[RMDB]
RNA sequence: GGGAACGACUCGAGUAGAGUCGAAAAUUUGUCCACUCUUGCACAGAAUGGAAUCAUGUUAAACUUACAGUGCAAGAAAGUAAGUUAACCCAUUUAAUUGAUAGCUAUGCUUAGUGUAAUGUGUAACUUUCUUCUCCCGAUUCGUCGGGAGAAGAAAAAAAGAAACAACAACAACAAC
Reactivity to DMS in 0.01 (KOAc 150mM, MgCl2 10mM, bicine 150mM(pH8.5), 24C), signal-to-noise 1, nucleotides 027 to 126: u010u010u010g000u020c020c010a170c070u000c020u000u000g000c000a010c060a040g000a150a040u010g000g050a050a070u000c240a110u040g010u000u040a100a080a020c010u000u000a060c120a120g020u020g050c090a040a040g000a050a110a070g010u000a030a030g010u000u000a060a140c010c020c040a120u030u000u050a040a150u030u000g000a080u000a050g010c020u000a050u010g000c010u000u000a030g000u020g010u000a020a070u030g000u030g000u000a020a060c070
Reactivity to 2A3 in 0.01 (KOAc 150mM, MgCl2 10mM, bicine 150mM(pH8.5), 24C), signal-to-noise 1, nucleotides 027 to 126: u090u050u060g150u000c000c000a000c010u090c050u000u000g000c000a000c000a000g160a060a080u030g070g120a200a000u110c110a170u300g000u000u100a030a100a100c000u000u000a000c000a150g000u000g210c000a050a050g070a050a000a000g030u000a030a030g000u000u000a000a000c030c000c000a000u020u010u030a000a120u080u020g050a090u020a060g000c000u000a000u300g060c000u000u150a000g000u000g100u300a150a000u180g200u000g000u000a000a000c000
Conditions: 150 mM KOAc, 10 mM MgCl2 and 150 mM bicine (pH 8.5), 24 C. Structure probing data (DMS and 2A3) for a 177-nucleotide construct. 2A3 adducts were read by reverse transcription with SuperScript II with manganese. It was measured as part of the RMDB libraries RFM100 and RFMREP. DMS adducts were read by reverse transcription with MarathonRT.